[RMDB]
RNA sequence: GGGAACGACUCGAGUAGAGUCGAAAAAAUCGCUCCUCUGGAGAAGAAAACCAGCGUUGCUUCCUGCCUGAGCCUCGUCUUCUGUCCCGCUAGUCGAGCGGACAACCCGAGCACCGCCGAAGGCCUUUUUUCUUUUAAGCAGCUUGGCUUCGCGGCGCACAGUCUUAGACUUCGGUCUAAGACUGUGAAAAGAAACAACAACAACAAC
Reactivity to 2A3 in 0.01 (KOAc 150mM, MgCl2 10mM, bicine 150mM(pH8.5), 24C), signal-to-noise 1, nucleotides 027 to 156: a000a000u080c040g010c020u010c000c010u050c080u190g030g010a080g020a210a040g000a040a100a010a010c000c000a040g000c070g070u060u030g010c020u070u020c020c020u050g140c000c010u050g080a010g040c060c000u030c000g000u020c030u140u000c020u050g070u000c000c000c000g050c010u010a080g110u180c150g050a010g020c020g020g000a000c020a080a060c000c010c000g000a010g010c070a020c050c000g000c050c030g020a040a000g010g040c000c000u140u110u010u080u100u140c070u120u290u080u100a110a020g050c040a020g010c010u100u100g030g000c000u000u050c080g020c000g050g010c010g040